[RMDB]
RNA sequence: GGGAACGACUCGAGUAGAGUCGAAAACUGCAGGUCAACGGAUCUUCUUCAGAUCAGCUAUUGCAGAAGAAAGGUCAGCCAAGCGCUCUGGGCCGGGUCGACUGUAUAUAGGAGCUUCUGAUUUCAACCAGAAGCUAACUCUCUCCGAAACAAUGAGCAGCAUGAUUAAUUUCGAUUAAUCAUGCUGAAAAGAAACAACAACAACAAC
Reactivity to DMS in 0.01 (KOAc 150mM, MgCl2 10mM, bicine 150mM(pH8.5), 24C), signal-to-noise 2, nucleotides 027 to 156: c020u000g010c030a060g020g060u000c020a080a040c040g000g040a010u000c020u000u030c120u030u010c130a040g000a070u020c010a060g010c060u000a110u010u000g010c030a040g030a080a080g000a060a120a110g000g020u010c020a070g000c000c020a100a090g000c030g020c080u020c100u020g020g030g020c060c050g000g030g020u010c010g030a050c020u000g000u000a060u000a170u010a130g010g020a090g020c020u000u030c020u020g030a050u010u020u010c140a110a050c040c020a000g000a060a000g000c000u010a000a040c020u000c030u000c050u000c000c060g020a180a070a110c040a070a100u010g020a220g010
Reactivity to 2A3 in 0.01 (KOAc 150mM, MgCl2 10mM, bicine 150mM(pH8.5), 24C), signal-to-noise 4, nucleotides 027 to 156: c030u040g020c030a030g010g090u120c050a090a070c120g120g000a020u000c010u110u040c000u090u080c080a030g020a210u070c020a020g070c020u120a100u280u230g020c010a010g010a050a010g070a040a080a020g010g010u020c010a000g020c020c020a140a030g050c060g010c080u020c040u090g030g070g070c020c000g030g000g020u050c030g020a040c020u060g080u090a060u020a030u060a200g010g120a020g000c000u000u000c000u000g090a150u100u200u280c060a050a030c020c010a010g000a000a000g000c000u010a020a010c000u000c000u010c000u000c070c030g080a080a080a040c080a050a180u150g010a030g020

The record gives the reactivity of an RNA of 207 nucleotides to DMS and 2A3. The reactions ran in a buffer of 150 mM KOAc, 10 mM MgCl2 and 150 mM bicine (pH 8.5), at 24 C. For DMS, 2,798 sequencing reads were counted. For 2A3 the reverse transcriptase was SuperScript II with manganese.